[RMDB]
RNA sequence: GGGAACGACUCGAGUAGAGUCGAAAACACAUGCCAUCAUAUCGGUUAAGAACUCUUAACUCUGAUGGCAUUCGAGUUAUGUGGUGCAUUGAAGCUCUCCCUUCAAUUCAACGUACCGUUCCGUCAAAGUAAUCAGAUACUUCGGUAUCUGAUUACUAAAAGAAACAACAACAACAAC
Reactivity to 2A3 in 0.01 (KOAc 150mM, MgCl2 10mM, bicine 150mM(pH8.5), 24C), signal-to-noise 7, nucleotides 027 to 126: c050a010c000a010u010g010c040c010a000u010c010a010u090a070u300c090g030g010u010u010a010a020g090a300a230c080u060c000u300u010a000a010c010u010c030u100g010a000u000g000g000c000a000u010u000c010g010a010g010u060u070a100u210g140u130g030g020u010g010c020a030u020u020g020a030a030g030c020u020c040u040c070c010c000u020u040c030a040a050u040u040c020a040a020c050g030u010a020c010c020g000u020u020c020c010g090u070c070a120a090
Reactivity to DMS in 0.01 (KOAc 150mM, MgCl2 10mM, bicine 150mM(pH8.5), 24C), signal-to-noise 7, nucleotides 027 to 126: c150a130c200a020u000g010c000c000a010u000c000a050u000a130u010c280g000g000u000u000a010a010g010a260a150c300u000c010u000u000a000a000c000u000c080u000g000a000u000g000g020c000a000u000u000c050g000a030g000u000u000a040u000g020u000g010g010u000g010c020a050u000u000g000a020a030g000c060u010c060u000c040c050c000u000u010c110a050a070u000u000c020a030a020c040g020u000a010c040c010g000u000u000c010c010g000u000c090a060a090
An RNA of 177 nucleotides, treated with 2A3 and DMS and read out base by base. It was measured as part of the RMDB library M2PK90. For DMS the reverse transcriptase was MarathonRT. For 2A3, 13,385 sequencing reads were counted.